[RMDB]
RNA sequence: GGGAACGACUCGAGUAGAGUCGAAAAAUUAGACAGGAUAAAGAAGAAUCUUCUCCUCCUGUUCAUUUGUGCACACUCUUGUGCACACUGUACACACAUCCUGCCAUGGUCAUCUUGUCACAAUACCGCAGUAAAGUCAGGGGGCACAAAGAGGACCCGAAUACAUUAGGUUCGCCUAAUGUAUUCGAAAAGAAACAACAACAACAAC
Reactivity to DMS in 0.01 (KOAc 150mM, MgCl2 10mM, bicine 150mM(pH8.5), 24C), signal-to-noise 2, nucleotides 027 to 156: a130u000u000a100g000a030c010a010g020g010a040u010a080a090a040g020a040a050g000a120a150u010c100u010u010c000u000c020c070u010c030c000u000g010u000u000c030a100u000u000u000g020u010g000c010a030c040a070c200u000c130u020u010g030u000g020c000a030c000a010c130u000g000u000a040c040a100c050a090c080a140u000c030c010u000g000c000c040a130u000g040g010u000c060a090u000c050u000u000g020u010c060a070c050a060a130u010a080c020c030g000c010a110g020u000a070a110a130g010u020c050a070g010g000g000g020g000c110a010c060a020a070a130g000a090g010g010a060c100c060
Reactivity to 2A3 in 0.01 (KOAc 150mM, MgCl2 10mM, bicine 150mM(pH8.5), 24C), signal-to-noise 7, nucleotides 027 to 156: a000u160u140a020g020a010c000a000g020g010a030u080a140a120a030g020a030a030g080a160a200u110c080u040u010c010u040c010c010u000c010c010u010g030u050u050c020a040u040u070u090g040u030g020c020a010c000a030c080u110c050u170u150g000u000g010c020a000c010a000c010u040g100u200a020c050a010c010a000c000a120u060c000c010u020g050c030c040a130u120g020g020u050c030a070u030c080u060u120g070u090c040a010c030a160a140u080a150c040c050g000c030a020g050u110a080a110a020g020u060c050a050g020g000g010g030g020c030a010c020a050a090a010g020a020g000g020a010c000c020